Chemical mapping of a 177-nucleotide RNA with 2A3 and DMS. For DMS, 7,415 sequencing reads were counted. The RNA was probed in 150 mM KOAc, 10 mM MgCl2 and 150 mM bicine (pH 8.5) at 24 C.
[RMDB]
RNA sequence: GGGAACGACUCGAGUAGAGUCGAAAAACGAUAAACCUUUUCUCUUUGGCCACAGCCUCGGAGGAUUAACAGUGAUAAGAUAUGCAGAAACAAGGCCAGAAAAGAUUAGAGGAGUUAUUGCCUCCUCAGUAAGAGUGGUAUUCGUACCACUCUUACUAAAAGAAACAACAACAACAAC
Reactivity to 2A3 in 0.01 (KOAc 150mM, MgCl2 10mM, bicine 150mM(pH8.5), 24C), signal-to-noise 5, nucleotides 027 to 126: a000c040g010a030u100a050a090a050c020c000u010u010u040u000c010u020c000u070u030u050g030g000c030c010a070c030a070g010c060c000u020c060g110g030a060g020g020a020u060u100a050a020c020a060g070u040g120a060u050a160a050g030a060u110a050u240g060c030a010g100a100a120a020c040a100a080g040g000c010c010a020g080a030a090a000a000g030a020u080u140a020g000a000g030g010a060g070u030u040a060u060u060g020c020c010u010c000c000u020c010
Reactivity to DMS in 0.01 (KOAc 150mM, MgCl2 10mM, bicine 150mM(pH8.5), 24C), signal-to-noise 6, nucleotides 027 to 126: a190c070g010a070u010a040a050a080c030c010u000u000u000u000c030u000c030u000u000u010g020g010c020c100a120c200a150g010c040c030u010c080g010g010a080g000g010a090u000u000a070a070c110a070g010u000g000a090u010a060a070g010a070u010a050u000g010c080a050g010a090a060a070c100a070a080g010g010c010c020a080g000a090a050a040a050g010a040u000u010a080g000a020g000g000a090g000u000u000a050u000u000g000c120c020u000c010c000u000c090